[RMDB]
RNA sequence: GGGAACGACUCGAGUAGAGUCGAAAAGUCAGUGACACUCACUGUGUCUGUGUCUGAGAGACACUGUGUGUCAGUCACACACUCAGACUGUCUGUGUCUCAGAGACAGACAGUCUCAGAGACAGAGAGCUAUCCACUCCGUUCGCGGAGUGGAUAGCAAAAGAAACAACAACAACAAC
Reactivity to DMS in 0.01 (KOAc 150mM, MgCl2 10mM, bicine 150mM(pH8.5), 24C), signal-to-noise 2, nucleotides 027 to 126: g000u000c060a150g010u000g000a060c080a120c070u000c010a060c040u010g000u000g030u000c010u000g010u000g020u010c150u010g010a150g000a060g000a030c010a020c030u000g020u000g010u000g000u010c230a160g000u000c010a020c000a100c140a050c020u000c080a000g000a020c000u000g000u000c010u030g000u000g000u020c070u040c210a200g010a000g000a000c000a030g010a050c030a000g020u000c000u000c030a020g000a020g010a030c050a110g000a090g000a100
Reactivity to 2A3 in 0.01 (KOAc 150mM, MgCl2 10mM, bicine 150mM(pH8.5), 24C), signal-to-noise 2, nucleotides 027 to 126: g050u040c070a020g000u030g000a050c040a040c040u020c010a020c010u030g010u020g020u010c010u020g180u020g090u020c110u180g250a200g000a010g000a230c000a010c050u000g000u000g000u020g050u060c100a040g020u000c000a000c000a010c000a020c010u000c020a010g000a010c000u000g020u000c020u000g080u000g200u060c010u020c230a120g030a000g020a040c000a010g020a010c020a010g010u000c000u010c010a040g010a020g000a000c020a030g170a030g010a000
This 177-nucleotide RNA was probed chemically with DMS and 2A3. It was measured as part of the RMDB library OK2TRN. Values cover nucleotides 27 to 126. 2A3 adducts were read by reverse transcription with SuperScript II with manganese. The 2A3 profile rests on 1,894 reads.